[RMDB]
RNA sequence: GGGAACGACUCGAGUAGAGUCGAAAAACGCCGCUACGGCGGCGAGGCACCGUCGCUGACGUGUGCACGACACACCGGUAAGUCCGACGCGCCCCCGUGGCGCGGCCUUCCAGGCUUGGGAUUACAACGUUGUUGUUCUGUUCGCAGAACAACAACGAAAAGAAACAACAACAACAAC
Reactivity to DMS in 0.01 (KOAc 150mM, MgCl2 10mM, bicine 150mM(pH8.5), 24C), signal-to-noise 2, nucleotides 027 to 126: a170c020g000c050c000g000c010u050a090c200g080g060c020g010g010c000g000a000g000g010c000a000c030c000g020u000c010g030c220u000g030a040c010g050u100g000u000g000c000a100c220g030a050c080a080c120a220c060c060g030g000u000a010a020g010u020c000c000g010a150c010g060c000g000c030c000c010c180c240g010u100g050g000c010g040c000g000g040c070c000u000u040c280c230a070g000g000c010u000u080g000g000g000a100u030u010a020c030a100a150
Reactivity to 2A3 in 0.01 (KOAc 150mM, MgCl2 10mM, bicine 150mM(pH8.5), 24C), signal-to-noise 4, nucleotides 027 to 126: a020c020g020c000c000g000c000u020a050c190g140g020c000g000g010c000g000a120g040g000c000a000c050c000g060u040c060g160c300u300g000a010c000g150u150g010u010g120c020a010c050g070a040c020a000c020a080c020c010g030g010u080a040a020g160u030c000c010g010a020c020g000c000g010c010c010c000c010c070g090u300g010g000c000g010c000g000g000c000c000u240u100c080c100a020g000g010c000u160u170g070g000g000a020u050u070a040c070a150a060